Structure probing data (2A3 and DMS) for a 177-nucleotide construct. DMS adducts were read by reverse transcription with MarathonRT. The RNA was probed in 150 mM KOAc, 10 mM MgCl2 and 150 mM bicine (pH 8.5) at 24 C.

RNA sequence: GGGAACGACUCGAGUAGAGUCGAAAAGUUUUUCAACGCUCGAGAGGCAGAGUCUCAAGGAGCCUCCAAUGGGCCUCACGUAUUCAUCUAGAUGGCGCUUCGGACAACGGCAUCACAUAAGAGAUGCAUGGGUCCAAAGAUUCGUCUUUGGACCCAUAAAAGAAACAACAACAACAAC
Reactivity to 2A3 in 0.01 (KOAc 150mM, MgCl2 10mM, bicine 150mM(pH8.5), 24C), signal-to-noise 2, nucleotides 027 to 126: g000u000u000u000u000u140c020a080a020c030g000c060u030c010g020a030g000a000g070g060c010a010g010a020g060u050c020u020c070a020a210g120g000a000g010c000c000u030c000c060a010a090u110g040g000g000c000c000u020c020a020c020g040u060a070u200u100c160a090u050c100u200a030g000a150u070g020g060c030g000c060u050u020c000g000g020a040c040a060a000c060g020g000c000a000u000c000a010c020a060u210a070a120g060a000g000a040u000g010c020
Reactivity to DMS in 0.01 (KOAc 150mM, MgCl2 10mM, bicine 150mM(pH8.5), 24C), signal-to-noise 2, nucleotides 027 to 126: g040u040u000u000u040u040c130a100a040c010g040c040u000c000g010a140g040a060g010g000c040a180g000a060g000u070c030u040c050a180a200g010g000a020g010c040c060u000c000c170a140a080u000g030g030g000c000c000u010c010a090c130g040u000a000u020u000c080a050u000c060u000a200g000a090u000g030g000c090g010c060u010u000c090g000g040a030c070a060a060c120g000g000c000a000u000c000a150c150a160u030a220a030g000a110g000a000u000g020c030